[RMDB]
RNA sequence: GGGAACGACUCGAGUAGAGUCGAAAAGCGUACUACGAACUUUUGACGAGACGAGGAUCAUGGGCACUCGCUCCCAAAUAGGAGCGAAACCCAUGGGAGUCUCGAUAAGUUCGUAUCGCAAAACAUUAUGACACCACUUCGGUGGUGUCAUAAUGAACUACAUGACCUCCUUCGGGAGGUCAUGUAGAAAAGAAACAACAACAACAAC
Reactivity to 2A3 in 0.01 (KOAc 150mM, MgCl2 10mM, bicine 150mM(pH8.5), 24C), signal-to-noise 2, nucleotides 027 to 156: g010c000g020u120a100c020u010a000c030g000a000a020c010u020u030u040u240g280a130c050g000a020g000a010c010g020a230g080g030a030u020c000a010u020g000g000g000c100a040c180u000c000g000c000u030c020c030c030a140a300a160u300a170g030g000a000g020c000g010a080a050a090c010c010c000a000u000g000g000g000a030g000u050c040u000c000g020a010u030a000a000g010u040u000c000g000u000a000u070c000g020c020a000a000a000a100c000a000u000u000a000u010g000a000c030a000c000c000a000c000u020u070c210g030g000u000g000g000u000g010u000c000a000u000a000a000u000g000a010a000